Chemical mapping of a 207-nucleotide RNA with DMS and 2A3. Reactivities are given for positions 27 through 156. The DMS profile rests on 1,307 reads. DMS (dimethyl sulfate) methylates the pairing face of unpaired adenines and cytosines.
RNA sequence: GGGAACGACUCGAGUAGAGUCGAAAACUACCAAUGGAUUACAAAGGUAAAAUAGUUCAAACAUUAUUGGAGCAAGAUUCCUUUGUGUGCGAAUUACCCAAAUGCAUACUUUUUACUGGACUCAAUGAUACUACCACUGAUAUCAAUAUCAAGAUCAUCAUCCGAACUGAUUCGUCAGUUCGGAUGAAAAAGAAACAACAACAACAAC
Reactivity to DMS in 0.01 (KOAc 150mM, MgCl2 10mM, bicine 150mM(pH8.5), 24C), signal-to-noise 1, nucleotides 027 to 156: c050u020a300c000c010a030a300u030g000g000a140u000u000a140c030a020a060a210g010g000u000a020a070a080a080u030a070g020u000u000c000a110a200a040c030a030u000u000a060u000u010g020g070a140g000c080a080a130g020a210u000u000c010c000u000u000u000g180u020g020u000g000c300g000a060a090u030u010a120c000c000c000a040a090a040u000g030c060a120u000a130c060u000u030u000u000u000a120c020u020g050g040a100c110u010c070a070a130u000g030a140u000a080c010u010a090c040c130a090c070u040g070a030u010a140u010c040a130a070u000a090u020c050a050a100g000a050u000c040a160
Reactivity to 2A3 in 0.01 (KOAc 150mM, MgCl2 10mM, bicine 150mM(pH8.5), 24C), signal-to-noise 4, nucleotides 027 to 156: c030u030a010c010c010a050a120u080g020g050a090u160u170a190c040a040a070a020g040g000u090a060a040a090a060u090a030g050u040u040c040a060a080a050c020a060u110u200a040u070u280g020g010a030g000c100a150a070g160a300u040u090c010c000u010u040u000g020u000g000u040g000c010g010a030a040u010u070a100c000c000c000a030a060a070u060g010c020a060u070a200c090u050u050u080u060u140a070c070u130g000g050a060c050u030c090a050a050u090g010a010u050a070c030u060a040c030c070a020c130u020g040a070u030a010u120c080a110a010u100a020u210c060a100a010g100a130u110c020a020
Conditions: 150 mM KOAc, 10 mM MgCl2 and 150 mM bicine (pH 8.5), 24 C.
2A3 adducts were read by reverse transcription with SuperScript II with manganese.